[RMDB]
RNA sequence: GGGAACGACUCGAGUAGAGUCGAAAAGAUAUGGACACCACUUCCUCGCUUGGAUUUACGUUCGGAAACGAACGUUGUCAGCGAGAAAGUGUUGUCCUAAGUCAAAAUCAUUCCUUCGGGAAUGAAAGAGAUACAGUAAGUUCGCUUACUGUAUCUCAAAAGAAACAACAACAACAAC
Reactivity to DMS in 0.01 (KOAc 150mM, MgCl2 10mM, bicine 150mM(pH8.5), 24C), signal-to-noise 7, nucleotides 027 to 126: g000a020u000a300u010g000g000a010c000a010c060c000a010c000u000u000c020c000u000c000g020c010u000u020g020g010a010u000u000u000a010c000g020u000u000c000g020g000a110a080a220c000g010a010a000c000g010u000u000g010u000c010a030g010c010g010a010g010a000a000a000g020u000g010u000u000g000u000c000c000u000a010a070g010u000c030a090a090a130a140u000c000a000u000u000c000c000u000u010c200g020g010g000a020a000u000g000a010a070a100
Reactivity to 2A3 in 0.01 (KOAc 150mM, MgCl2 10mM, bicine 150mM(pH8.5), 24C), signal-to-noise 8, nucleotides 027 to 126: g020a020u060a040u150g000g000a000c000a000c010c000a000c000u000u000c000c000u000c010g040c050u110u260g260g020a080u300u280u220a010c000g000u000u010c000g030g030a060a080a050c010g000a000a000c000g000u000u000g000u000c000a000g000c000g000a000g020a000a000a000g000u000g000u000u000g000u000c000c000u000a070a010g000u000c030a020a010a010a300u040c000a000u000u010c010c000u010u070c300g120g000g010a000a000u000g000a010a020a010

Structure probing data (DMS and 2A3) for a 177-nucleotide construct. The reactions ran in a buffer of 150 mM KOAc, 10 mM MgCl2 and 150 mM bicine (pH 8.5), at 24 C. It was measured as part of the RMDB library TTRDEL. Reactivities are given for positions 27 through 126. 2A3 adducts were read by reverse transcription with SuperScript II with manganese. The DMS profile rests on 13,175 reads. For 2A3, 41,030 sequencing reads were counted.